[RMDB]
RNA sequence: GGGAACGACUCGAGUAGAGUCGAAAAGAUAUGGAGUCAGGCAUCGAUCUAUAAAGAGUGGUUCGGAAACGAACCAUAGGGAGCCUGUCUCCUAAGUCAAAGCGAAUCCUGUUCGCAGGAUUCGCAAGGGCAUAGUAAAGUUCGCUUUACUAUGCCCAAAAGAAACAACAACAACAAC
Reactivity to 2A3 in 0.01 (KOAc 150mM, MgCl2 10mM, bicine 150mM(pH8.5), 24C), signal-to-noise 3, nucleotides 027 to 126: g010a010u080a020u100g000g000a000g030u020c000a000g030g000c020a190u060c120g200a070u060c110u190a170u190a300a300a030g190a000g030u030g040g000u000u000c030g000g000a020a030a020c020g000a000a000c030c000a010u020a020g010g010g030a030g000c000c010u010g000u000c000u020c000c000u000a050a000g020u000c040a110a080a030g010c010g000a000a000u030c010c000u000g060u060u040c180g050c090a000g020g010a010u000u000c000g000c000a020a010
Reactivity to DMS in 0.01 (KOAc 150mM, MgCl2 10mM, bicine 150mM(pH8.5), 24C), signal-to-noise 2, nucleotides 027 to 126: g020a020u000a300u000g000g000a030g020u000c010a010g000g020c010a150u000c070g000a110u000c080u010a140u010a110a100a130g000a150g010u000g000g020u000u000c000g010g000a070a060a090c010g000a000a000c000c000a000u000a000g010g000g000a080g030c000c000u000g000u000c000u000c010c000u010a040a030g000u000c030a070a140a070g000c000g000a010a000u000c000c000u000g000u000u000c150g000c010a000g030g010a030u000u020c000g020c000a010a020
Conditions: 150 mM KOAc, 10 mM MgCl2 and 150 mM bicine (pH 8.5), 24 C.
Structure probing data (2A3 and DMS) for a 177-nucleotide construct.
Values cover nucleotides 27 to 126.
The 2A3 profile rests on 4,246 reads.